RNA sequence: GGGAACGACUCGAGUAGAGUCGAAAACAUAAAGCUAUUCCACUGCAGUUGGUCCAUCCUUUUUUUGCACCGAUUGAAUUCAAGUGGGAUGGAGCAGGGAGAAUGGGGGCAGUGGUUCCCAGUUCCCGCAGAAUACUAACUUCGGUUAGUAUUCUGCAAAAGAAACAACAACAACAAC
Reactivity to 2A3 in 0.01 (KOAc 150mM, MgCl2 10mM, bicine 150mM(pH8.5), 24C), signal-to-noise 2, nucleotides 027 to 126: c030a060u300a150a140a040g050c060u100a070u130u000c010c000a060c040u020g040c010a140g020u190u090g070g070u050c030c010a000u070c010c040u000u140u110u110u050u120u160g090c130a060c000c090g210a150u030u250g120a130a250u120u080c030a050a040g060u050g030g000g000a000u010g000g010a030g060c000a040g000g060g080a170g080a100a090u110g040g030g020g000g000c000a000g030u060g050g010u010u020c020c010c000a000g020u000u000c010c000c000
Reactivity to DMS in 0.01 (KOAc 150mM, MgCl2 10mM, bicine 150mM(pH8.5), 24C), signal-to-noise 2, nucleotides 027 to 126: c130a090u030a130a060a150g010c160u000a110u000u000c000c010a080c000u000g010c000a160g010u020u000g010g010u010c040c010a010u000c060c030u000u000u000u000u000u000u000g040c210a060c120c100g000a070u000u000g010a110a100u000u000c090a040a070g000u000g000g000g000a050u000g000g000a050g000c040a040g020g000g000a090g010a060a070u010g010g000g020g000g030c040a040g030u000g030g000u000u000c000c000c010a250g000u000u000c010c010c010